An RNA of 207 nucleotides, treated with 2A3 and DMS and read out base by base.
RNA sequence: GGGAACGACUCGAGUAGAGUCGAAAAGCAGGAUCGCUGGGACCGGCUAGCUGGUGGUGGGAGCUCUACUGAAGCGCGCACGGUAGAGCGAAGAACACCACUAAGCUAGCGGUCCUGUGCUGAAGCGCGCACGGCAACCGAAAGGUGCGGAAUUAUGCAUAAUAUGUAACUUCGGUUACAUAUUAUGAAAAGAAACAACAACAACAAC
Reactivity to 2A3 in 0.01 (KOAc 150mM, MgCl2 10mM, bicine 150mM(pH8.5), 24C), signal-to-noise 2, nucleotides 027 to 156: g080c080a030g060g160a140u130c010g000c010u030g000g000g010a000c000c020g100g220c010u010a000g000c000u000g000g010u010g000g000u000g000g000g000a010g010c000u000c000u030a010c000u000g040a140a030g010c000g000c000g000c000a020c000g000g010u000a000g000a000g000c000g010a040a000g000a010a000c000a000c000c000a010c010u030a060a010g000c010u010a000g000c000g000g000u000c000c000u000g000u000g000c000u020g010a080a020g000c000g000c000g000c000a020c030g010g000c020a010a010c010c010g040a110a040a010g020g000u030g020c020g040g070a070a070u290u170a080u300g010
Reactivity to DMS in 0.01 (KOAc 150mM, MgCl2 10mM, bicine 150mM(pH8.5), 24C), signal-to-noise 2, nucleotides 027 to 156: g030c020a100g010g010a060u010c000g030c030u010g000g030g000a030c040c030g030g050c020u000a020g030c000u000g020g030u000g000g030u000g000g010g000a090g030c010u000c000u040a030c000u000g020a050a050g020c000g070c010g030c000a300c020g010g020u000a010g020a010g030c010g000a060a130g020a130a290c010a010c000c000a030c030u000a020a020g020c000u000a020g000c000g000g000u010c000c000u000g000u000g010c010u010g000a050a020g030c030g050c020g010c000a300c030g000g000c020a050a080c040c020g000a080a110a160g000g030u000g030c000g010g000a140a180u000u010a130u000g000

It was measured as part of the RMDB library RNAMAK. For 2A3, 9,061 sequencing reads were counted. Conditions: 150 mM KOAc, 10 mM MgCl2 and 150 mM bicine (pH 8.5), 24 C.